[RMDB]
RNA sequence: GGGAACGACUCGAGUAGAGUCGAAAAUGGUGAUACCGGAGCGGAUGCCAAAAUCGGCCGCUUGUGCAUAGAAGGCACGCUCUUCUGUCGAUAGUCUCGGGCGCUCCUGCUCGCCAGACCAGGCGAACAUGCAUAAUCGGUUCGCCGAUUAUGCAUGAAAAGAAACAACAACAACAAC
Reactivity to DMS in 0.01 (KOAc 150mM, MgCl2 10mM, bicine 150mM(pH8.5), 24C), signal-to-noise 3, nucleotides 027 to 126: u000g010g000u000g020a170u030a230c070c020g000g000a030g020c020g000g000a140u010g010c010c010a030a070a110a080u000c020g000g000c020c010g050c220u010u030g010u070g030c040a010u030a300g010a060a030g020g030c000a040c050g010c010u000c000u020u040c150u010g020u000c020g020a010u000a300g000u040c010u000c000g010g010g000c010g000c010u000c000c020u010g000c100u000c000g000c020c010a070g020a100c270c130a080g000g000c000g010a010a120
Reactivity to 2A3 in 0.01 (KOAc 150mM, MgCl2 10mM, bicine 150mM(pH8.5), 24C), signal-to-noise 9, nucleotides 027 to 126: u140g050g030u140g080a120u150a230c020c020g010g010a010g010c020g070g050a200u110g020c000c010a000a030a000a190u030c010g010g010c010c010g080c170u120u210g100u220g030c010a020u030a130g030a020a030g040g000c010a010c030g000c010u010c000u060u030c050u090g120u010c010g000a020u030a120g110u030c000u000c000g000g000g000c000g000c010u010c000c000u010g030c030u020c010g000c010c000a100g030a280c040c030a020g010g010c000g000a010a020